The data come from the RNA Mapping Database (RMDB), library OK2TRN. The record gives the reactivity of an RNA of 177 nucleotides to 2A3 and DMS.
[RMDB]
RNA sequence: GGGAACGACUCGAGUAGAGUCGAAAAUCUGCUAACACAGACACAUAUUUUUGCUGAACCUUCUGAGAGUACUUGCUGACAUUCUGACACUUAAACCUCGAAUACCUAAGUAUUAUCUAUAAACAAAGCAUAAUUACCCUUUCGAGGGUAAUUAUGCAAAAGAAACAACAACAACAAC
Reactivity to 2A3 in 0.01 (KOAc 150mM, MgCl2 10mM, bicine 150mM(pH8.5), 24C), signal-to-noise 1, nucleotides 027 to 126: u010c000u020g020c020u060a080a040c040a000c010a060g050a060c000a020c010a070u150a220u110u080u090u120u070g060c040u040g060a040a100c000c000u030u030c040u070g080a060g000a020g060u030a060c040u070u070g020c060u030g010a010c010a070u010u000c060u070g020a010c020a050c110u050u050a000a030a020c000c000u010c080g020a040a000u080a080c010c020u040a110a000g040u000a060u100u040a040u030c040u010a150u140a240a040a000c080a020a110a020
Reactivity to DMS in 0.01 (KOAc 150mM, MgCl2 10mM, bicine 150mM(pH8.5), 24C), signal-to-noise 2, nucleotides 027 to 126: u000c020u000g000c030u010a140a060c210a160c030a020g010a060c080a160c100a020u000a020u010u010u000u000u020g010c060u010g030a130a090c070c020u010u000c120u010g000a140g000a090g010u000a030c050u000u010g020c080u000g050a040c030a070u000u000c050u000g010a080c080a040c120u000u020a090a100a200c060c010u000c040g020a070a060u010a030c060c040u000a050a200g000u010a080u010u000a050u020c050u000a110u020a090a030a100c070a020a120a090
The RNA was probed in 150 mM KOAc, 10 mM MgCl2 and 150 mM bicine (pH 8.5) at 24 C. DMS adducts were read by reverse transcription with MarathonRT.